[RMDB]
RNA sequence: GGGAACGACUCGAGUAGAGUCGAAAAGAUAAGCUAGCAGCAAAAAGGAACCGAUUCCCACCAAGUUCGGAAAGAGAUACCGGGCGAGGCGCUGAAGAAAGAAUCUUGCUUCAGACACCCCAAGGACAUGACCUUAAAAUGUUCGCAUUUUAAGGAACCAUGCCUUUGAGUUCGCUCAAAGGCAUGGAAAAGAAACAACAACAACAAC
Reactivity to 2A3 in 0.01 (KOAc 150mM, MgCl2 10mM, bicine 150mM(pH8.5), 24C), signal-to-noise 2, nucleotides 027 to 156: g010a050u200a100a070g040c030u050a040g020c020a000g030c010a070a120a080a000a120g110g020a030a040c060c020g080a150u050u000c040c000c020a010c000c000a020a020g010u010u000c000g060g000a160a110a020g120a020g040a020u060a120c010c000g010g020g000c040g010a090g020g020c050g000c010u010g000a000a000g000a030a220a020g040a020a020u040c020u080u030g070c000u050u010c010a060g060a110c040a080c010c010c000c070a050a110g090g060a030c040a130u170g110a110c000c020u020u000a000a000a010a000u010g010u050u040c150g000c060a000u010u000u000u000a000a000g000g000a000a000